Description: The record gives the reactivity of an RNA of 177 nucleotides to 2A3 and DMS. The RNA was probed in 150 mM KOAc, 10 mM MgCl2 and 150 mM bicine (pH 8.5) at 24 C.

[RMDB]
RNA sequence: GGGAACGACUCGAGUAGAGUCGAAAAGUCCAUGUUUUAUGGAUAACGCUUAUACUUAUGACGGAGUUACGAGAAGCCGUUGCUUCACUCUGAAAUCAUAAGCGCAAGCCAAGCGCGAAAGACUUGGACGUGCUAAGUAAUUCGUUACUUAGCACGUAAAAGAAACAACAACAACAAC
Reactivity to 2A3 in 0.01 (KOAc 150mM, MgCl2 10mM, bicine 150mM(pH8.5), 24C), signal-to-noise 9, nucleotides 027 to 126: g020u000c000c000a010u030g210u130u270u120u240a020u020g000g000a010u030a130a020c050g020c110u160u120a060u050a160c000u010u000a000u020g000a010c000g020g000a010g030u080u120a120c150g100a070g020a140a000g000c050c120g260u120u300g000c000u010u000c000a000c000u000c000u010g030a120a060a020u010c000a000u000a000a010g010c000g000c000a100a020g010c000c000a010a000g000c000g000c010g050a040a020a020g060a130c000u000u000g000g000
Reactivity to DMS in 0.01 (KOAc 150mM, MgCl2 10mM, bicine 150mM(pH8.5), 24C), signal-to-noise 9, nucleotides 027 to 126: g000u000c000c000a020u000g010u030u030u030u040a020u010g000g000a010u000a090a110c190g010c110u010u030a100u020a100c010u000u010a010u000g000a040c010g010g000a010g000u010u030a110c210g010a160g010a010a000g030c000c300g020u020u030g010c000u000u000c010a130c010u000c000u000g000a100a090a110u000c000a000u000a000a000g000c000g020c000a140a150g010c000c000a000a000g000c030g010c000g000a010a100a000g010a160c000u010u000g000g000

It was measured as part of the RMDB libraries RFM100 and RFMREP.